This 207-nucleotide RNA was probed chemically with 2A3.

RNA sequence: GGGAACGACUCGAGUAGAGUCGAAAACGCGGUGGGCCUCACGAUCAAGGGCGGCAUCAGCCGCGCGCUGAACAUUGAGGACGCGAAGGCGAAACUCACCGGCCUCGGCCACUCCGGCGAGUCGGUCGCGGCGAUUAUGAAGAACGCGUCGGCGUCCGAGAGUGUAGAGCUUCGGCUCUACACUCUCAAAAGAAACAACAACAACAAC
Reactivity to 2A3 in 0.01 (KOAc 150mM, MgCl2 10mM, bicine 150mM(pH8.5), 24C), signal-to-noise 1, nucleotides 027 to 156: c030g030c000g020g000u050g030g000g080c040c030u030c000a170c030g160a220u170c160a050a110g150g010g060c030g000g020c000a120u020c100a080g000c010c000g020c050g000c020g020c030u160g030a050a000c050a060u130u130g050a020g020g030a050c030g030c000g060a090a040g090g000c040g070a190a040a040c000u020c010a050c000c040g140g010c020c000u000c000g000g000c020c000a020c000u020c040c000g300g000c100g030a070g010u140c230g060g000u000c000g020c000g030g020c020g020a040u140u090a060u230g050a050a000g020a080a030c000g000c040g090u020c020g040g010c010g000u080c040c050
The 2A3 profile rests on 421 reads. The reactions ran in a buffer of 150 mM KOAc, 10 mM MgCl2 and 150 mM bicine (pH 8.5), at 24 C. It was measured as part of the RMDB library OK3TST.